RNA sequence: GGGAACGACUCGAGUAGAGUCGAAAAGCUCCUUCAGGUGAACGAUCUCGGUUGUUUCUCUGAAGGCAUGAUCACCCCGUCCGAUGCGUAAGUUCGUGCUUCCGUCGAACGCGAAAGUCGGACGGCGAAAACGAGUUACCGUUCGCGGUAACUCGAACAGCAUACCAUUCUUCGGAAUGGUAUGCUGAAAAGAAACAACAACAACAAC
Reactivity to DMS in 0.01 (KOAc 150mM, MgCl2 10mM, bicine 150mM(pH8.5), 24C), signal-to-noise 1, nucleotides 027 to 156: g000c020u000c000c020u000u000c000a080g060g000u010g000a050a000c020g000a050u000c030u010c270g020g010u000u000g020u000u000u000c060u000c000u020g000a100a030g000g020c050a030u000g020a090u010c110a150c000c010c020c010g010u000c000c020g040a020u000g000c070g000u000a080a170g000u000u000c040g060u000g010c160u000u000c110c140g000u000c030g030a010a050c060g000c000g020a120a110a170g030u000c020g040g000a050c000g020g030c030g010a070a080a070a150c020g000a040g030u000u000a030c030c000g000u010u020c240g010c040g070g000u010a040a000c020u010c010g000a030a070
Reactivity to 2A3 in 0.01 (KOAc 150mM, MgCl2 10mM, bicine 150mM(pH8.5), 24C), signal-to-noise 3, nucleotides 027 to 156: g030c050u040c020c000u010u010c000a020g060g000u080g100a010a010c010g010a040u040c040u120c220g230g000u000u020g010u000u090u030c040u000c000u000g010a000a000g010g000c010a130u120g020a080u080c040a160c000c000c000c000g000u000c000c000g000a010u060g090c010g020u030a150a120g010u020u000c010g010u040g070c060u190u090c090c080g150u070c000g020a000a010c000g000c000g020a130a150a000g020u000c000g000g010a000c000g000g010c020g040a090a110a010a030c030g000a000g010u010u000a000c020c010g000u050u060c270g010c000g150g000u000a000a000c000u000c000g000a010a000
This 207-nucleotide RNA was probed chemically with DMS and 2A3. The data come from the RNA Mapping Database (RMDB), library M2RFPK. Conditions: 150 mM KOAc, 10 mM MgCl2 and 150 mM bicine (pH 8.5), 24 C. The DMS profile rests on 2,565 reads. For DMS the reverse transcriptase was MarathonRT. For 2A3, 2,433 sequencing reads were counted.